RNA sequence: GGGAACGACUCGAGUAGAGUCGAAAAGUGAUUCAUCGUUGAACUUAACGCCAUGCGUAGCGCCAAAAGCAUUGAUCAGUUCUAUCAGGUCGCGAAGUUCUCCAACGGUCAUGCGGCUGGUUGAUUGGUUGCUGUGAUGUUUCGACAUCACAGCAACAAAAGAAACAACAACAACAAC
Reactivity to DMS in 0.01 (KOAc 150mM, MgCl2 10mM, bicine 150mM(pH8.5), 24C), signal-to-noise 2, nucleotides 027 to 126: g020u000g050a100u000u000c070a050u010c110g000u000u000g010a060a080c070u000u000a070a120c070g000c070c050a070u000g010c020g030u010a130g000c040g020c080c060a030a070a180a130g030c070a090u010u000g010a070u000c060a050g010u000u000c060u010a080u000c050a080g020g000u020c030g000c060g010a040a020g000u020u010c010u020c040c050a090a090c090g010g000u000c030a130u010g010c150g010g000c030u000g000g000u000u020g000a180u000u000g030
Reactivity to 2A3 in 0.01 (KOAc 150mM, MgCl2 10mM, bicine 150mM(pH8.5), 24C), signal-to-noise 1, nucleotides 027 to 126: g030u020g000a110u230u000c020a060u120c080g060u030u130g030a100a000c000u080u010a050a020c060g000c050c070a020u050g000c070g060u090a010g030c060g110c010c000a030a020a000a080g000c030a040u000u130g020a040u040c020a000g020u080u010c010u010a100u110c030a020g090g000u050c000g060c000g050a000a050g000u020u000c000u040c040c020a080a000c030g030g040u010c040a100u050g060c030g090g000c050u080g010g060u020u110g080a150u040u180g070